[RMDB]
RNA sequence: GGGAACGACUCGAGUAGAGUCGAAAAGAUAUGGACUAGGACAUGCUGAGUCGGUCGGAAACGACCGAUCAGCAACAGCCUAGGUCCUAAGUCAAAAGGGUGUGUUGGCUUCGGCCAACACACCCAAGUACUAAUUAUUGUUCGCAAUAAUUAGUACAAAAGAAACAACAACAACAAC
Reactivity to 2A3 in 0.01 (KOAc 150mM, MgCl2 10mM, bicine 150mM(pH8.5), 24C), signal-to-noise 2, nucleotides 027 to 126: g030a000u080a020u170g010g000a000c010u000a010g010g000a040c050a200u110g010c010u010g040a160g280u040c000g000g010u000c000g000g080a080a080a050c010g000a000c000c000g020a000u010c000a010g030c000a000a010c010a010g020c000c000u020a050g060g000u010c010c000u040a100a040g030u020c050a030a050a060a130g010g010g000u030g060u000g030u060u020g000g030c000u060u090c300g070g000c000c000a030a010c030a000c020a000c000c000c000a000a000
Reactivity to DMS in 0.01 (KOAc 150mM, MgCl2 10mM, bicine 150mM(pH8.5), 24C), signal-to-noise 3, nucleotides 027 to 126: g010a040u010a300u000g000g000a130c000u010a010g000g000a050c080a200u000g000c000u010g000a040g020u000c000g000g000u010c000g000g000a080a110a180c020g010a010c000c000g010a020u000c000a000g000c000a010a030c230a100g000c000c000u000a030g010g010u010c000c000u000a020a110g000u010c060a060a100a140a120g000g000g000u000g030u010g000u000u010g000g000c000u000u010c210g010g020c000c010a000a010c000a010c000a000c000c000c000a000a010